About this RNA
This 207-nucleotide RNA was probed chemically with 2A3. Reactivities are given for positions 27 through 156. The RNA was probed in 150 mM KOAc, 10 mM MgCl2 and 150 mM bicine (pH 8.5) at 24 C. The data come from the RNA Mapping Database (RMDB), library M2RFPK.
RNA sequence: GGGAACGACUCGAGUAGAGUCGAAAAUUACCGCCCACGAUGGGGUGCAGCGUUCCUGCAAUAUCCAGGGCACCUAGGUGCAGCCUUGUAGUUUUAGUGGACUUUAGGCUAAAGAAUUUCACUAGCAAAAAUCUUUAAGGGUUCGCCCUUAAAGAAAGUAACGUAUUACCUUCGGGUAAUACGUUACAAAAGAAACAACAACAACAAC
Reactivity to 2A3 in 0.01 (KOAc 150mM, MgCl2 10mM, bicine 150mM(pH8.5), 24C), signal-to-noise 2, nucleotides 027 to 156: u100u040a050c030c040g030c020c020c000a050c030g120a100u100g010g010g040g010u020g010c010a020g000c030g060u090u100c000c020u000g000c020a020a070u120a120u190c040c020a020g030g000g000c000a010c010c020u070a100g120g000u020g060c030a000g010c000c010u040u050g100u140a030g010u000u020u040u080a010g010u020g030g000a010c020u040u050u030a020g010g000c020u050a070a080a020g070a000a050u110u180u140c000a000c010u020a020g000c030a010a110a120a100a160u020c000u020u000u000a000a000g040g000g000u030u100c160g060c010c030c000u000u000a000a000a000g010a020a010a000